[RMDB]
RNA sequence: GGGAACGACUCGAGUAGAGUCGAAAACAGGAUGGUGAUAUGGUCGAGGGGAAGAGGAUGACAUCCUUUCUGUCCGUGGUUAGAAGAAACCAGGUGAGCCCAUGACUUCCGCCUGCACGUAUCGCAGCGUAACUCCUCUGUUCGCAGAGGAGUUACGAAAAGAAACAACAACAACAAC
Reactivity to 2A3 in 0.01 (KOAc 150mM, MgCl2 10mM, bicine 150mM(pH8.5), 24C), signal-to-noise 4, nucleotides 027 to 126: c060a020g080g020a120u120g040g060u100g040a090u020a070u060g050g090u070c160g080a040g000g030g010g030a060a020g040a030g150g000a020u070g010a010c020a130u140c010c000u040u070u060c010u030g080u020c030c010g100u070g010g020u060u080a040g120a250a010g080a010a070a020c020c030a000g030g020u090g050a020g040c000c010c030a030u090g070a040c000u060u020c010c040g180c060c000u030g000c020a030c090g040u080a050u090c070g000c060a010g010
Reactivity to DMS in 0.01 (KOAc 150mM, MgCl2 10mM, bicine 150mM(pH8.5), 24C), signal-to-noise 2, nucleotides 027 to 126: c080a040g020g000a070u020g000g000u050g000a020u020a020u000g000g000u000c110g000a110g000g000g020g030a060a070g000a060g020g010a040u010g000a090c060a300u010c000c020u000u000u000c000u020g000u000c010c020g050u020g010g030u000u000a070g010a150a100g010a080a070a050c050c010a150g000g010u000g000a120g000c000c010c020a050u000g000a080c040u020u000c000c010g010c040c020u000g060c010a140c070g010u000a080u000c010g000c010a050g000
The data come from the RNA Mapping Database (RMDB), library OK1LIB. An RNA of 177 nucleotides, treated with 2A3 and DMS and read out base by base. The 2A3 profile rests on 2,781 reads. The DMS profile rests on 2,632 reads.